Structure probing data (2A3 and DMS) for a 207-nucleotide construct. The DMS profile rests on 3,383 reads.

RNA sequence: GGGAACGACUCGAGUAGAGUCGAAAAAGCUUAGUCAACAGCAAGAGGCUGCAUGUGUGUAAUUGCAGCUGGCACUUGAGCAACCUAAGUGGGUUCUCUACUCAGUGACUAGGGAUUCCUCUGAAGCCCAAGAUGUCAUGGACGCCCACCCAGGGCAUGACCUAGCAUCAUUCGUGAUGCUAGGUCAAAAAGAAACAACAACAACAAC
Reactivity to 2A3 in 0.01 (KOAc 150mM, MgCl2 10mM, bicine 150mM(pH8.5), 24C), signal-to-noise 2, nucleotides 027 to 156: a010g050c040u040u040a000g100u130c030a060a070c030a130g040c010a040a040g040a030g070g010c000u000g000c000a010u040g050u060g040u000g080u300a260a040u050u020g000c000a000g000c000u000g010g010c030a010c060u020u000g010a010g020c060a080a040c010c030u020a020a090g000u110g010g020g030u100u060c020u000c010u020a070c000u000c060a100g080u070g160a050c030u020a020g060g000g000a020u070u090c020c030u080c160u120g020a030a020g010c000c000c000a040a020g120a190u110g010u020c020a010u100g110g010a020c050g000c020c010c010a020c020c010c000a020g020g020g000c010a020
Reactivity to DMS in 0.01 (KOAc 150mM, MgCl2 10mM, bicine 150mM(pH8.5), 24C), signal-to-noise 2, nucleotides 027 to 156: a140g020c010u000u000a080g020u010c050a050a110c060a060g010c070a090a130g000a150g020g040c000u000g010c010a030u000g020u040g000u000g030u010a090a110u010u000g010c040a020g010c020u000g010g040c050a080c020u000u010g010a080g010c030a060a140c140c010u010a030a040g000u000g010g030g040u000u000c040u010c020u000a030c030u010c020a160g000u000g030a060c050u000a090g020g000g010a070u000u000c020c100u000c090u010g030a040a150g030c030c030c000a080a140g010a240u000g010u000c050a090u030g000g010a140c110g000c010c030c000a050c030c040c050a300g000g010g040c000a180

2A3 adducts were read by reverse transcription with SuperScript II with manganese. The RNA was probed in 150 mM KOAc, 10 mM MgCl2 and 150 mM bicine (pH 8.5) at 24 C. Source: RMDB library OK3TST, as collected in RNAgym.